RNA sequence: GGGAACGACUCGAGUAGAGUCGAAAACAAAAGAUGGCAGAACAGAAGAGCAGACAGAAUCUGGGUCCUAGAUGACUUCAUUGCACUGCUGCAACUGCCUUCUCCAGACCUCUUGCCAGGUGAAGAAAUUGAGACCCAGAGUGAUUAUAUGACCUGAUAAAUUAAAAUCGUUCGCGAUUUUAAUUUAAAAAGAAACAACAACAACAAC
Reactivity to 2A3 in 0.01 (KOAc 150mM, MgCl2 10mM, bicine 150mM(pH8.5), 24C), signal-to-noise 1, nucleotides 027 to 156: c030a030a070a010a040g010a020u000g000g000c000a000g040a240a000c030a080g140a300a020g100a110g050c010a000g100a150c010a000g060a020a080u040c010u020g000g000g000u000c050c020u080a070g040a100u060g070a050c040u000u040c050a040u000u140g030c080a010c120u030g040c020u040g020c000a000a030c030u020g000c000c000u010u010c010u030c000c000a100g020a170c010c030u080c000u130u120g080c060c040a020g000g000u000g020a060a070g000a090a040a080u250u240g020a040g000a060c000c000c000a020g000a000g040u040g020a080u060u220a160u080a080u300g000a000c010c020u000g000a010
Reactivity to DMS in 0.01 (KOAc 150mM, MgCl2 10mM, bicine 150mM(pH8.5), 24C), signal-to-noise 1, nucleotides 027 to 156: c070a080a040a070a090g030a030u000g000g030c020a070g000a230a140c040a180g000a060a080g020a130g000c000a030g010a180c060a090g000a230a170u000c010u000g010g010g000u010c000c040u000a110g000a110u010g000a160c040u000u000c000a060u010u000g000c020a040c070u000g000c050u000g000c010a050a100c030u010g000c010c000u020u000c020u000c080c030a200g000a110c040c070u000c030u020u000g010c060c070a190g000g030u000g010a080a090g000a110a160a120u000u000g000a090g000a060c000c000c040a080g000a070g020u010g000a070u010u000a090u000a070u000g010a060c030c020u010g000a300